[RMDB]
RNA sequence: GGGAACGACUCGAGUAGAGUCGAAAAGAUUCAGAAUCCAUGGCUGGAAGAGGUAGUAAGGCCAUUGGGAGGGCAUGCCUCUCCUCAGCCCACCCCCACCCUGUGUGGGUCUCCAUUCUGAAAUUUCUGGGUCCCUUUGAUUCGUCAAAGGGACCCAAAAAGAAACAACAACAACAAC
Reactivity to 2A3 in 0.01 (KOAc 150mM, MgCl2 10mM, bicine 150mM(pH8.5), 24C), signal-to-noise 1, nucleotides 027 to 126: g030a030u040u030c030a000g000a030a000u040c150c100a240u220g040g000c000u010g000g020a030a000g000a000g030g000u000a000g130u060a050a210g120g040c000c000a000u060u120g210g030g010a170g020g010g000c020a040u000g000c000c000u000c010u000c030c030u070c000a000g000c020c000c000a000c000c000c000c000c000a010c000c010c060u200g060u060g020u010g160g000g040u000c030u000c030c000a010u000u000c010u000g030a040a060a070u000u030u090c010
An RNA of 177 nucleotides, treated with 2A3 and read out base by base.
Reactivities are given for positions 27 through 126.
The 2A3 profile rests on 613 reads.